[RMDB]
Chemical mapping of a 177-nucleotide RNA with DMS and 2A3. For DMS, 1,335 sequencing reads were counted. Source: RMDB library RFMREP, as collected in RNAgym. DMS adducts were read by reverse transcription with MarathonRT. The 2A3 profile rests on 1,693 reads.

RNA sequence: GGGAACGACUCGAGUAGAGUCGAAAAACAACAUAAUGGAAAAACGACUAUCUCUUCGACUGCUUCUGUUAUCGCAUUUCGUGCGAGGAUAAAGGUCGUUCGGAGUGAAAGCGUUCACUAUCCACACGGAUAAGGAUGUGUUCGCACAUCCUUAUCCAAAAGAAACAACAACAACAAC
Reactivity to DMS in 0.01 (KOAc 150mM, MgCl2 10mM, bicine 150mM(pH8.5), 24C), signal-to-noise 2, nucleotides 027 to 126: a090c060a080a020c150a110u010a110a140u010g010g000a030a120a080a060a030c010g020a100c040u010a120u000c000u000c000u000u000c000g000a010c050u010g000c000u000u000c050u000g020u000u000a050u010c020g000c000a030u000u020u000c290g030u000g000c030g020a010g000g030a010u000a010a020a030g000g010u000c060g030u000u000c000g030g010a000g010u000g000a030a080a030g020c020g000u000u010c070a110c140u000a060u010c000c000a080c300a140c160
Reactivity to 2A3 in 0.01 (KOAc 150mM, MgCl2 10mM, bicine 150mM(pH8.5), 24C), signal-to-noise 2, nucleotides 027 to 126: a000c050a030a000c010a080u300a240a100u210g000g010a020a030a010a020a010c010g300a130c040u030a060u010c020u000c000u010u010c000g000a020c000u000g000c000u040u000c020u000g040u050u020a050u030c000g020c040a030u060u210u200c160g040u070g010c000g000a000g000g000a000u000a020a030a000g030g000u020c020g060u070u050c000g000g010a000g000u010g050a030a010a000g010c000g040u010u030c050a050c050u090a170u000c000c000a030c000a020c150
The reactions ran in a buffer of 150 mM KOAc, 10 mM MgCl2 and 150 mM bicine (pH 8.5), at 24 C. Reactivities are given for positions 27 through 126.